About this RNA
This 207-nucleotide RNA was probed chemically with 2A3 and DMS. It was measured as part of the RMDB library OK3TST. Values cover nucleotides 27 to 156. For 2A3, 957 sequencing reads were counted.
RNA sequence: GGGAACGACUCGAGUAGAGUCGAAAAGUAAUAGAUAACUGGAUGCAGCGUAGGCGUCAACGCAUAUCCAGUACGAAUGGUAACUGUAAAUAAAAUAUGGCGCCUAGUACAAUUACCAACAGAAGGAUAAGCGAUGGUGAUGUCAAUCACAUUUGCAAUAUAAUUUAAUCUUCGGAUUAAAUUAUAUAAAAGAAACAACAACAACAAC
Reactivity to 2A3 in 0.01 (KOAc 150mM, MgCl2 10mM, bicine 150mM(pH8.5), 24C), signal-to-noise 2, nucleotides 027 to 156: g000u040a000a220u050a130g110a150u110a190a030c000u010g030g020a030u090g030c190a130g020c170g000u000a010g010g020c020g040u000c010a000a000c020g000c000a000u010a010u230c010c000a000g010u000a020c000g080a090a100u040g000g000u050a030a010c020u030g020u040a000a060a250u090a070a170a260a020u140a040u050g000g000c000g000c020c000u010a020g020u000a010c000a010a010u040u030a020c010c000a000a070c010a110g150a110a010g060g040a040u100a070a040g000c000g030a000u010g090g040u030g010a050u070g130u160c050a080a050u030c000a050c000a070u180u140u200g000c020a000
Reactivity to DMS in 0.01 (KOAc 150mM, MgCl2 10mM, bicine 150mM(pH8.5), 24C), signal-to-noise 1, nucleotides 027 to 156: g010u010a080a140u000a100g010a140u000a050a050c000u010g000g000a020u000g000c120a080g050c030g000u000a070g000g010c010g000u010c010a080a030c040g000c000a060u010a080u000c010c000a010g040u010a110c100g010a120a100u000g040g010u000a010a060c020u000g010u000a050a080a210u010a060a080a120a150u010a080u000g020g010c000g030c000c010u000a100g030u030a060c020a030a030u000u000a010c020c010a040a190c070a120g030a080a110g000g000a150u010a040a180g030c040g040a030u000g010g000u000g000a040u000g010u000c140a060a090u000c010a020c030a080u000u000u000g020c020a100